The record gives the reactivity of an RNA of 207 nucleotides to 2A3.
Values cover nucleotides 27 to 156.
The reactions ran in a buffer of 150 mM KOAc, 10 mM MgCl2 and 150 mM bicine (pH 8.5), at 24 C.
For 2A3, 592 sequencing reads were counted.
It was measured as part of the RMDB library OK3TST.
2A3 adducts were read by reverse transcription with SuperScript II with manganese.

RNA sequence: GGGAACGACUCGAGUAGAGUCGAAAACGACGGGUAGGUGACGCCGUGCAUGACGUUGUGGAUUACGGACUCCACCACCCCAUACAUGUGCGCCAGGUCCCGCUGAACGCCUCGGUACGCGCCUUUGUGCGCGCGGAUGUGCAUGACGUCGGCCUGGGUGACUGGAGCCAUUCGUGGCUCCAGUCACAAAAGAAACAACAACAACAAC
Reactivity to 2A3 in 0.01 (KOAc 150mM, MgCl2 10mM, bicine 150mM(pH8.5), 24C), signal-to-noise 1, nucleotides 027 to 156: c000g000a010c020g030g030g070u170a080g060g080u270g050a000c000g000c000c000g000u000g000c020a000u040g060a030c000g000u010u000g020u010g020g130a040u230u030a130c170g000g140a040c090u000c000c010a000c000c040a000c050c020c000c000a000u060a050c020a000u060g160u230g100c020g000c000c000a000g000g000u060c000c000c000g040c030u040g000a080a020c010g000c000c020u050c020g130g010u080a070c010g030c000g020c000c000u100u170u300g160u200g010c000g000c000g030c000g000g040a240u190g060u160g000c030a000u060g040a070c030g000u000c000g040g030c050c000u000g000g000